[RMDB]
RNA sequence: GGGAACGACUCGAGUAGAGUCGAAAAAAUGGGUAACUACACCGAAAGGUGGCGUCAAUCUCUUAAACCUAUCCUUAGUUCGGAUUGAGGGCUGGAACUCGCCCUCAUGAAGAUGGAAUCCGUAGUAUUCGUAGUUUACAUUCGUGUAAACUACGAAAAAAGAAACAACAACAACAAC
Reactivity to DMS in 0.01 (KOAc 150mM, MgCl2 10mM, bicine 150mM(pH8.5), 24C), signal-to-noise 7, nucleotides 027 to 126: a050a030u020g010g000g010u010a090a020c030u010a110c010a010c010c000g010a110a060a140g000g010u000g000g010c110g010u000c090a080a100u000c030u000c030u000u020a040a110a090c020c020u010a040u000c030c030u010u010a080g030u010u000c020g000g000a100u000u010g010a010g010g000g020c000u020g030g010a120a120c200u020c190g000c010c000c000u000c000a000u000g000a300a110g000a030u000g000g000a070a050u010c080c070g020u020a080g010u020a150
Reactivity to 2A3 in 0.01 (KOAc 150mM, MgCl2 10mM, bicine 150mM(pH8.5), 24C), signal-to-noise 8, nucleotides 027 to 126: a000a010u160g010g010g030u060a010a010c010u050a020c020a000c000c000g050a090a020a010g010g000u010g000g010c010g030u020c040a040a080u030c030u010c000u090u090a150a170a060c010c000u030a090u150c020c010u170u150a090g110u120u040c000g000g010a000u010u000g000a000g000g000g020c020u090g090g070a120a070c050u070c130g000c000c000c010u000c000a000u000g000a000a000g010a000u030g030g060a030a040u060c070c080g070u140a070g060u020a170
The data come from the RNA Mapping Database (RMDB), libraries RFM100 and RFMREP.
Chemical mapping of a 177-nucleotide RNA with DMS and 2A3.
The reactions ran in a buffer of 150 mM KOAc, 10 mM MgCl2 and 150 mM bicine (pH 8.5), at 24 C.
Reactivities are given for positions 27 through 126.
DMS adducts were read by reverse transcription with MarathonRT.